Structure probing data (2A3 and DMS) for a 177-nucleotide construct. 2A3 adducts were read by reverse transcription with SuperScript II with manganese. For DMS the reverse transcriptase was MarathonRT. Source: RMDB library RFMREP, as collected in RNAgym. The DMS profile rests on 4,422 reads.

[RMDB]
RNA sequence: GGGAACGACUCGAGUAGAGUCGAAAAUUGUUCAUUGAAGUCAUUGAUGCAAACUCCUUGGUCACACACACAUACGGCGCGGAAGGCGUGUUUGCUGACGUUUCCAUUCCCUUGUUUCAAUCAUUGGCAAGCAGUAAUUCUUCGGAAUUACUGCUUGAAAAGAAACAACAACAACAAC
Reactivity to 2A3 in 0.01 (KOAc 150mM, MgCl2 10mM, bicine 150mM(pH8.5), 24C), signal-to-noise 2, nucleotides 027 to 126: u060u050g040u070u060c040a040u030u080g120a130a020g080u080c020a050u030u100g030a030u080g050c000a000a080a050c040u050c030c010u020u080g030g020u090c010a020c010a020c000a000c000a000c000a030u080a250c060g010g000c020g040c020g090g070a030a010g050g010c030g050u110g110u070u010u040g020c030u020g030a000c050g040u010u020u030c020c000a030u040u040c040c000c000u000u040g010u000u010u000c080a110a130u070c110a160u070u050g090g000
Reactivity to DMS in 0.01 (KOAc 150mM, MgCl2 10mM, bicine 150mM(pH8.5), 24C), signal-to-noise 3, nucleotides 027 to 126: u000u000g020u000u000c040a080u000u010g000a140a130g010u020c060a060u000u010g010a060u010g000c060a040a070a100c100u000c020c050u000u000g010g010u000c030a070c040a070c070a070c100a040c070a040u000a100c060g010g010c030g010c030g000g010a090a160g020g000c070g020u000g010u000u000u000g010c040u000g000a210c100g010u000u000u000c020c030a240u000u000c010c000c000u000u000g010u000u000u010c040a090a120u000c130a170u010u000g010g000